This 207-nucleotide RNA was probed chemically with 2A3. The 2A3 profile rests on 647 reads.

RNA sequence: GGGAACGACUCGAGUAGAGUCGAAAAGAAAGAAAGAAAGAAAGGUAUGAAGUCCUAUUCACGCUAGAUAGGAUAAACUUCAUAUUGAUCGUGUAUGUGCUAACGCACAUACACGAAUGCGCAUGCAGAACUGCAUGCAUGAACAUAUGGCGUGCAAACUCGGUAGGUGGUUCGCCACCUACCGAGUAAAAGAAACAACAACAACAAC
Reactivity to 2A3 in 0.01 (KOAc 150mM, MgCl2 10mM, bicine 150mM(pH8.5), 24C), signal-to-noise 1, nucleotides 027 to 156: g030a020a030a020g110a030a130a050g070a140a000a000g060a000a020a060g060g030u000a000u010g000a010a000g000u000c000c000u000a000u000u080c050a010c040g000c020u010a020g000a000u000a000g040g000a010u040a090a180a020c000u000u000c010a000u000a020u030u060g010a000u020c000g000u000g000u000a000u000g050u000g000c080u110a090a090c160g000c000a000c000a000u000a000c000a000c000g000a000a000u040g050c030g000c000a000u000g000c000a020g080a290a060c120u050g000c010a000u000g030c010a000u190g050a070a060c080a020u100a050u150g000g010c010g000u040g060c050a140a110